[RMDB]
RNA sequence: GGGAACGACUCGAGUAGAGUCGAAAAGGCAGCUAAUUGUGCUUGGUGCUGCUCGCUGAUUUCACUGCUGGCGGAAUAACCCUCAUUGUGAAUAAUCAUUUCACCUAAGCCAACCAACCAAUCAUAAACCUUAGGGUCGAUUCGUCGACCCUAAGGUAAAAGAAACAACAACAACAAC
Reactivity to 2A3 in 0.01 (KOAc 150mM, MgCl2 10mM, bicine 150mM(pH8.5), 24C), signal-to-noise 1, nucleotides 027 to 126: g060g000c010a010g000c040u090a210a000u120u110g130u100g090c090u030u030g010g000u130g030c010u040g000c010u010c040g130c030u010g100a080u050u090u010c080a080c020u080g060c000u020g000g010c000g060g050a110a130u130a260a260c020c000c000u000c030a100u050u120g010u020g060a070a060u090a060a000u050c010a000u030u080u090c070a080c110c010u040a050a000g090c020c020a030a010c000c000a000a010c000c000a050a090u140c000a020u300a180a060
Reactivity to DMS in 0.01 (KOAc 150mM, MgCl2 10mM, bicine 150mM(pH8.5), 24C), signal-to-noise 1, nucleotides 027 to 126: g000g050c050a010g000c050u040a010a130u010u000g030u000g000c030u000u000g000g010u000g000c010u000g010c010u000c100g040c160u010g000a060u010u000u000c070a010c110u000g060c140u000g000g020c060g010g010a130a070u010a160a120c080c000c040u000c040a110u000u000g000u000g050a030a030u010a100a090u000c070a020u010u000u000c040a020c060c090u010a110a040g000c030c010a010a110c150c080a050a070c160c110a010a070u030c070a040u020a070a090